[RMDB]
RNA sequence: GGGAACGACUCGAGUAGAGUCGAAAAACCUGCUGUCGUCGACGAGCUCGUGCAGCACGUCGAGCCCUCACUUCAUGUAAAGGACGUCCGGACACAGUUCGUACACCGCCGUGUGCUGCGUCGGUCUGGAGCAUCUUUGGUUCGCCGAAGAUGCUCCAAAAGAAACAACAACAACAAC
Reactivity to DMS in 0.01 (KOAc 150mM, MgCl2 10mM, bicine 150mM(pH8.5), 24C), signal-to-noise 2, nucleotides 027 to 126: a090c040c000u030g000c030u010g020u010c020g020u000c010g000a040c050g020a080g020c000u000c110g000u020g000c080a050g000c080a050c020g040u010c060g000a060g010c040c040c000u020c130a110c120u030u040c100a010u050g000u010a050a070a140g000g100a080c010g000u000c000c000g010g030a150c010a100c070a060g000u050u000c000g030u000a020c140a040c030c020g010c120c020g000u000g010u000g010c030u000g010c050g030u000c060g010g000u000c050u000
Reactivity to 2A3 in 0.01 (KOAc 150mM, MgCl2 10mM, bicine 150mM(pH8.5), 24C), signal-to-noise 9, nucleotides 027 to 126: a000c020c000u030g010c040u030g030u090c070g010u030c030g020a040c020g030a040g030c020u020c040g190u150g080c120a020g000c010a010c020g080u060c010g030a040g020c000c010c000u060c030a110c040u090u120c080a120u160g040u200a110a090a040g050g010a050c030g020u040c030c020g040g020a010c030a010c010a090g050u090u080c010g020u050a040c020a010c040c020g060c020c020g040u070g020u040g040c040u020g000c000g020u030c020g000g020u020c030u050

Structure probing data (DMS and 2A3) for a 177-nucleotide construct. It was measured as part of the RMDB library OK1LIB. For 2A3 the reverse transcriptase was SuperScript II with manganese. The RNA was probed in 150 mM KOAc, 10 mM MgCl2 and 150 mM bicine (pH 8.5) at 24 C.